The record gives the reactivity of an RNA of 207 nucleotides to 2A3. It was measured as part of the RMDB library OK3TST.

RNA sequence: GGGAACGACUCGAGUAGAGUCGAAAAUGCAAAGGGAAGAGAGCCCUGGGGAAAGAGUAAUGGGGCCCCAACUUCCGUAGGUGCCCAGGCUGGUGGAGAUCUUUGGGAACUGUGUGAAGACUUAACGGAAAUCUUCCUGCUGGAGAUCAGGAGUGGGUACGGGUAAUCAGUUCGCUGAUUACCCGUAAAAAGAAACAACAACAACAAC
Reactivity to 2A3 in 0.01 (KOAc 150mM, MgCl2 10mM, bicine 150mM(pH8.5), 24C), signal-to-noise 2, nucleotides 027 to 156: u140g000c030a050a030a060g000g010g030a070a010g040a000g030a030g090c000c000c000u020g020g000g020g010a040a050a020g050a030g050u110a060a090u140g020g030g000g010c000c030c010c000a010a080c000u070u060c020c020g070u070a040g050g020u080g010c000c010c010a010g060g000c030u050g000g050u040g000g010a040g010a030u020c050u060u090u080g040g000g040a020a100c060u040g010u010g030u090g190a060a050g000a040c020u070u180a070a020c040g010g050a030a010a040u010c010u040u020c020c020u040g020c020u040g010g020a050g030a060u060c040a010g060g000a020g010u070g000g060g000